RNA sequence: GGGAACGACUCGAGUAGAGUCGAAAAAGCAGCAGUUCUCCCUCGCCGCCUGAUCUCAGGUAGCGACGAGACUGCUCCUGCACUAAGGAGUGUCAGCCCGGGGCUGUUCCCGACCCGGAUCCUGGCAUCAGCUAGGGGACUAAACCUUGAUCCCGGUGAAAAGUGAAUACUUCGGUAUUCACUUUUCAAAAGAAACAACAACAACAAC
Reactivity to 2A3 in 0.01 (KOAc 150mM, MgCl2 10mM, bicine 150mM(pH8.5), 24C), signal-to-noise 1, nucleotides 027 to 156: a020g020c030a010g000c000a020g000u210u050c000u010c060c010c010u000c010g000c010c010g030c000c010u090g110a280u200c300u080c120a000g000g020u030a010g000c000g000a000c000g000a000g000a000c000u000g000c000u010c010c010u030g010c020a020c170u120a020a070g030g010a020g050u010g000u010c010a030g010c000c030c000g000g020g000g000c060u140g000u040u010c020c010c020g020a020c010c010c000g000g000a020u090c000c000u000g000g000c010a020u050c030a090g070c030u050a040g030g010g010g000a010c030u150a190a090a020c010c010u040u040g020a090u050c030c000c000g090g030u060
About this RNA
Conditions: 150 mM KOAc, 10 mM MgCl2 and 150 mM bicine (pH 8.5), 24 C. Structure probing data (2A3) for a 207-nucleotide construct. Reactivities are given for positions 27 through 156. For 2A3 the reverse transcriptase was SuperScript II with manganese. For 2A3, 1,013 sequencing reads were counted.